This 177-nucleotide RNA was probed chemically with 2A3 and DMS.
DMS (dimethyl sulfate) methylates the pairing face of unpaired adenines and cytosines.
[RMDB]
RNA sequence: GGGAACGACUCGAGUAGAGUCGAAAAGCUGCGAGCGCCGCCGAGGAUGCUGCCACACAGAAUGCAUUGCUACAGACGCAACGCGACGAGCUGCAGGCACGGUGUGAUGGGUUGGAGGCCCAGAUGCGAACAGACCGUUGUUCGCAACGGUCUGUUCAAAAGAAACAACAACAACAAC
Reactivity to 2A3 in 0.01 (KOAc 150mM, MgCl2 10mM, bicine 150mM(pH8.5), 24C), signal-to-noise 1, nucleotides 027 to 126: g050c040u080g000c010g060a070g070c030g000c020c020g030c020c020g060a070g060g020a020u070g010c020u040g060c060c000a020c000a000c000a000g100a160a070u120g040c020a010u070u050g060c030u090a130c030a180g170a070c080g060c040a110a060c070g000c060g080a090c030g000a040g020c020u030g000c060a040g070g000c020a000c070g000g030u090g040u040g070a120u080g000g010g010u090u110g060g020a070g110g000c000c000c080a030g030a120u100g060c040
Reactivity to DMS in 0.01 (KOAc 150mM, MgCl2 10mM, bicine 150mM(pH8.5), 24C), signal-to-noise 2, nucleotides 027 to 126: g010c040u010g010c060g010a070g030c070g020c040c030g000c100c000g000a150g010g000a090u000g020c060u000g000c080c020a050c100a160c110a110g000a070a080u000g000c020a080u010u000g020c040u010a300c110a060g000a080c090g000c050a100a060c050g020c000g000a080c080g010a080g020c020u000g020c070a020g000g010c050a090c070g030g000u000g000u010g000a120u010g000g000g020u000u000g010g010a070g000g010c000c020c000a090g000a040u000g000c120

Conditions: 150 mM KOAc, 10 mM MgCl2 and 150 mM bicine (pH 8.5), 24 C.